[RMDB]
RNA sequence: GGGAACGACUCGAGUAGAGUCGAAAACUAUGCAGAUUCGUCUGCAUAGAGACCCGAUGAAGCGGGACUUACACAGCUUCAUACACGUAAGAAGUGCAAUAAAGGGACGAGGGUUCGCCCUCGUCAACCUACGUCCAUCAUUCGUGAUGGACGUAGGAAAAGAAACAACAACAACAAC
Reactivity to DMS in 0.01 (KOAc 150mM, MgCl2 10mM, bicine 150mM(pH8.5), 24C), signal-to-noise 3, nucleotides 027 to 126: c000u000a010u000g000c000a000g000a030u000u010c190g000u000c000u010g010c000a020u000a000g000a080g000a140c020c000c000g020a010u000g010a000a010g000c020g000g010g000a140c210u010u010a100c180a090c030a110g000c000u000u000c010a020u000a160c030a040c060g000u020a100a080g010a160a170g000u000g020c230a050a080u020a030a050a070g000g000g010a020c000g000a020g000g010g020u000u000c220g000c010c010c000u000c000g000u000c010a010a060
Reactivity to 2A3 in 0.01 (KOAc 150mM, MgCl2 10mM, bicine 150mM(pH8.5), 24C), signal-to-noise 5, nucleotides 027 to 126: c000u010a010u000g000c000a000g030a040u030u100c110g120u010c090u010g000c000a000u000a000g000a010g030a030c000c010c000g010a020u030g010a000a000g000c010g060g040g060a090c070u180u210a050c150a010c020a080g000c010u010u000c000a000u040a040c040a000c030g040u060a050a030g100a140a050g110u030g040c040a040a120u170a260a120a050g170g060g000a000c010g000a000g020g010g000u050u050c200g120c000c000c000u010c000g000u010c010a000a000
The record gives the reactivity of an RNA of 177 nucleotides to DMS and 2A3. Values cover nucleotides 27 to 126. For DMS, 3,166 sequencing reads were counted. Conditions: 150 mM KOAc, 10 mM MgCl2 and 150 mM bicine (pH 8.5), 24 C. 2A3 adducts were read by reverse transcription with SuperScript II with manganese.